[RMDB]
RNA sequence: GGGAACGACUCGAGUAGAGUCGAAAAGAUAUGGAUAGCUGGAGGUAAAUCCCGUACGCAGGACUAUGCUUCGGAAACGAAGCACGAAUCCUGGUACGGGAUUUACCGUUGAAAGCUAUCCUAAGUCGGAGUAUGACUAGUUCGCUAGUCAUACUCCAAAAGAAACAACAACAACAAC
Reactivity to DMS in 0.01 (KOAc 150mM, MgCl2 10mM, bicine 150mM(pH8.5), 24C), signal-to-noise 1, nucleotides 027 to 126: g010a090u010a300u010g010g010a030u000a010g030c010u010g010g010a110g020g010u010a010a000a000u000c000c000c010g020u000a000c010g030c000a010g000g010a040c110u020a150u000g010c020u020u000c010g000g000a140a120a220c010g010a020a000g000c000a020c020g030a070a160u010c000c000u000g000g010u010a000c000g030g020g000a000u000u000u000a000c010c000g000u000u000g080a160a130a060g000c000u000a000u020c000c010u000a000a050g010u030c110
Conditions: 150 mM KOAc, 10 mM MgCl2 and 150 mM bicine (pH 8.5), 24 C. Chemical mapping of a 177-nucleotide RNA with DMS.